[RMDB]
RNA sequence: GGGAACGACUCGAGUAGAGUCGAAAACAGGAAAGAGAAAGCUGAAGAGGAGACGGACCGGUUUUCCAUCCACGCUCCCGUACUUCAUCCCCUCGGGUAUGGUGGCUGCGAUGAUGACCGCAUGGGGUGGGACAUUGUCAUUCGUGACAAUGUCCCAAAAAGAAACAACAACAACAAC
Reactivity to DMS in 0.01 (KOAc 150mM, MgCl2 10mM, bicine 150mM(pH8.5), 24C), signal-to-noise 2, nucleotides 027 to 126: c100a040g000g010a040a100a070g000a060g010a080a090a090g040c130u000g000a100a170g010a160g010g000a050g000a050c140g010g030a150c190c030g000g000u010u010u000u010c160c050a010u000c000c040a170c220g000c020u000c250c000c000g030u000a040c010u000u010c080a140u010c020c010c020c070u010c090g000g000g000u000a030u010g010g000u000g000g000c030u000g010c170g030a000u010g000a090u000g000a120c020c020g010c110a060u000g000g000g000g030

An RNA of 177 nucleotides, treated with DMS and read out base by base. The reactions ran in a buffer of 150 mM KOAc, 10 mM MgCl2 and 150 mM bicine (pH 8.5), at 24 C. In probing experiments dimethyl sulfate is read out at A N1 and C N3, which are open when not base-paired.